The record gives the reactivity of an RNA of 177 nucleotides to DMS and 2A3. For 2A3 the reverse transcriptase was SuperScript II with manganese.
RNA sequence: GGGAACGACUCGAGUAGAGUCGAAAACAUUGCGAUGACCGCGCUAUUUUGCAUUUGUAUGCGGAUCCGGCCUGGCGAGCAGCAGUGGAUGUGCUUGCACGGUUUUUGCAUAUCGACACCGUGCUACGCUGGAGAGAAACUUCGGUUUCUCUCCAGCAAAAGAAACAACAACAACAAC
Reactivity to DMS in 0.01 (KOAc 150mM, MgCl2 10mM, bicine 150mM(pH8.5), 24C), signal-to-noise 2, nucleotides 027 to 126: c060a060u010u000g010c020g010a100u010g020a060c190c040g000c120g020c030u020a030u000u020u000u010g010c070a040u000u010u010g040u010a050u000g000c030g000g010a060u020c070c090g000g000c050c090u010g010g000c060g000a060g000c050a090g020c060a090g000u010g010g000a080u030g010u010g020c060u000u010g020c000a020c000g000g000u000u010u000u040u000g020c090a120u000a060u010c120g000a120c230a050c010c010g020u010g010c020u000a000c160
Reactivity to 2A3 in 0.01 (KOAc 150mM, MgCl2 10mM, bicine 150mM(pH8.5), 24C), signal-to-noise 1, nucleotides 027 to 126: c010a040u010u160g000c000g080a080u070g090a160c000c030g000c000g010c080u040a100u080u090u110u120g040c020a050u040u040u300g210u170a040u070g000c020g060g010a030u030c050c020g030g040c030c000u020g020g030c020g020a070g020c040a000g000c000a000g050u040g040g130a100u100g080u100g040c030u060u020g030c010a020c000g050g020u000u030u000u070u160g110c110a070u070a030u220c070g020a030c010a000c020c010g030u000g010c000u030a050c090